[RMDB]
RNA sequence: GGGAACGACUCGAGUAGAGUCGAAAAUGGCUGUACACCCGCUAUCUGAAGCCUGGCGGCCUACUGGCGACCGCGAUCCAGGAUGUCCACCGCAUCAGCCACGAACGCCAGUUCGUGCAGCUCAAUGCGAGUAAGUCAUGUUCGCAUGACUUACUCGAAAAGAAACAACAACAACAAC
Reactivity to 2A3 in 0.01 (KOAc 150mM, MgCl2 10mM, bicine 150mM(pH8.5), 24C), signal-to-noise 3, nucleotides 027 to 126: u030g020g020c020u010g010u060a010c030a040c060c040c010g000c050u080a110u180c080u170g090a080a020g020c020c020u020g020g000c010g040g000c020c040u050a080c030u050g000g000c020g050a080c040c040g040c040g030a020u010c060c030a070g050g070a110u090g030u040c070c040a030c000c050g050c020a040u030c020a010g020c020c000a030c030g010a020a000c010g020c070c010a000g000u000u030c020g000u000g040c030a020g000c050u060c090a090a040u170g060
Reactivity to DMS in 0.01 (KOAc 150mM, MgCl2 10mM, bicine 150mM(pH8.5), 24C), signal-to-noise 4, nucleotides 027 to 126: u000g010g010c020u010g010u000a110c090a180c120c030c030g030c080u010a070u010c100u000g010a130a080g000c070c080u000g010g010c010g000g010c090c050u000a070c070u000g000g000c050g000a120c130c100g000c050g000a060u000c060c060a070g010g010a100u000g000u000c030c050a170c100c040g000c020a050u000c120a090g000c070c000a040c010g000a040a050c020g000c080c120a090g020u000u000c080g020u010g010c010a050g010c020u000c210a030a100u000g000